Conditions: 150 mM KOAc, 10 mM MgCl2 and 150 mM bicine (pH 8.5), 24 C. This 177-nucleotide RNA was probed chemically with DMS and 2A3.

RNA sequence: GGGAACGACUCGAGUAGAGUCGAAAAGAUAUGGACAUUGACUCCUUGGAUUUAUGGGUUUCUUCGGAAACGAGAAACCCAUUGUCAGGAGUAAUGUCCUAAGUCAAAAGAACUGUUCGCAGUUCAACACCAUUCUCCUGUUCGCAGGAGAAUGGUGAAAAGAAACAACAACAACAAC
Reactivity to DMS in 0.01 (KOAc 150mM, MgCl2 10mM, bicine 150mM(pH8.5), 24C), signal-to-noise 2, nucleotides 027 to 126: g020a040u010a300u010g000g020a000c000a000u000u000g010a050c010u000c000c000u000u000g020g010a040u010u010u000a040u000g000g000g030u000u000u010c000u040u000c010g040g020a060a080a150c020g010a040g000a000a010a000c000c000c000a000u000u000g000u000c000a030g010g000a030g010u000a000a010u000g010u000c000c020u000a030a090g010u000c040a070a110a110a100g010a010a020c020u000g020u000u020c190g000c000a010g020u010u000c000a140a150
Reactivity to 2A3 in 0.01 (KOAc 150mM, MgCl2 10mM, bicine 150mM(pH8.5), 24C), signal-to-noise 2, nucleotides 027 to 126: g020a010u060a030u150g000g000a000c010a010u010u090g300a090c020u030c010c020u100u190g190g000a120u270u300u130a020u030g000g000g020u010u020u030c070u160u140c030g050g040a050a100a060c020g000a020g000a010a000a000c090c000c010a000u000u010g000u010c000a000g020g010a000g000u010a000a010u010g000u000c000c000u000a000a010g040u010c030a000a010a070a160g020a020a000c020u010g030u110u110c300g000c170a010g000u000u020c030a000a050
For 2A3 the reverse transcriptase was SuperScript II with manganese. For 2A3, 2,600 sequencing reads were counted. Values cover nucleotides 27 to 126.